RNA sequence: GGGAACGACUCGAGUAGAGUCGAAAACUCGUAACGAAGCUCGUGGAGGCUAAAAUCCCACACUUUGAAGAAAUUGACACCAUCUGGCGUGUAAGUAUACUCAUCCACGGGGUCAACGGGCAGACCUACCAAGUUCUCACGAUAACCGUGAGCGUUGACCAUAGGCAACGUUCGCGUUGCCUAUGGUAAAAGAAACAACAACAACAAC
Reactivity to 2A3 in 0.01 (KOAc 150mM, MgCl2 10mM, bicine 150mM(pH8.5), 24C), signal-to-noise 3, nucleotides 027 to 156: c000u010c010g050u050a100a040c040g020a060a000g050c040u090c160g070u020g000g040a160g060g010c150u170a060a000a000a100u050c000c040c000a010c000a020c010u090u090u120g110a100a070g090a070a160a080u100u050g050a050c020a020c060c000a050u170c060u090g020g010c060g040u000g020u060a080a020g020u010a060u040a150c040u050c110a110u010c030c030a020c020g000g000g020g000u030c030a050a010c010g000g040g000c050a020g030a060c020c000u050a100c030c010a040a070g060u180u000c000u020c000a000c000g060a090u120a190a100c170c000g000u000g000a000g000c010g000u020u070g050
Reactivity to DMS in 0.01 (KOAc 150mM, MgCl2 10mM, bicine 150mM(pH8.5), 24C), signal-to-noise 1, nucleotides 027 to 156: c040u000c020g000u030a070a150c020g000a090a140g030c040u000c040g070u000g020g040a100g010g020c030u000a020a070a160a130u010c020c000c010a080c040a030c060u010u000u010g000a120a090g020a150a080a100u010u000g010a060c040a060c030c030a120u000c090u020g030g010c230g000u010g010u010a040a070g030u000a150u010a100c050u020c040a230u010c020c010a050c050g000g010g010g020u000c030a100a060c020g000g020g050c040a180g000a030c090c020u010a120c050c000a020a130g000u000u000c000u000c000a010c030g050a150u010a120a140c150c030g050u000g010a030g000c090g000u010u000g010